[RMDB]
RNA sequence: GGGAACGACUCGAGUAGAGUCGAAAAUGCUGGACGAUGCUUCUGCUGCCCUGCAACAGAACCGCGACCUGUUGCAGAUCGCGCUGGACCAGAUGGAUCAGGGCAUCACCGUUCUUGACAAGGAUCAGUACUAUCCAGUCUUCGGACUGGAUAGUACAAAAGAAACAACAACAACAAC
Reactivity to 2A3 in 0.01 (KOAc 150mM, MgCl2 10mM, bicine 150mM(pH8.5), 24C), signal-to-noise 3, nucleotides 027 to 126: u080g010c050u090g010g100a040c090g030a060u040g030c000u040u190c020u040g040c040u080g000c010c010c000u000g020c010a010a000c000a000g030a060a080c050c060g050c040g080a090c000c010u010g020u050u050g050c010a000g000a010u090c050g000c010g020c100u070g020g050a090c020c030a020g060a190u130g050g000a040u050c070a080g070g000g000c010a020u020c000a030c010c040g060u110u030c010u050u070g060a080c070a120a140g080g010a130u140c060a020
Reactivity to DMS in 0.01 (KOAc 150mM, MgCl2 10mM, bicine 150mM(pH8.5), 24C), signal-to-noise 4, nucleotides 027 to 126: u000g000c030u000g030g010a090c090g010a060u010g000c050u000u010c020u000g010c070u010g020c030c140c010u010g000c000a030a020c010a010g000a110a110c100c110g000c110g010a090c200c000u000g000u000u000g000c030a000g000a030u010c170g010c060g010c030u000g010g010a130c120c020a100g010a080u000g020g010a090u010c040a080g020g010g010c020a020u000c040a210c070c030g010u000u000c020u000u000g000a090c130a090a150g000g020a100u000c070a130
Overview
Chemical mapping of a 177-nucleotide RNA with 2A3 and DMS. The 2A3 profile rests on 3,673 reads. Conditions: 150 mM KOAc, 10 mM MgCl2 and 150 mM bicine (pH 8.5), 24 C. Source: RMDB library OK2TST, as collected in RNAgym. Values cover nucleotides 27 to 126. DMS (dimethyl sulfate) methylates the pairing face of unpaired adenines and cytosines. For 2A3 the reverse transcriptase was SuperScript II with manganese. For DMS the reverse transcriptase was MarathonRT.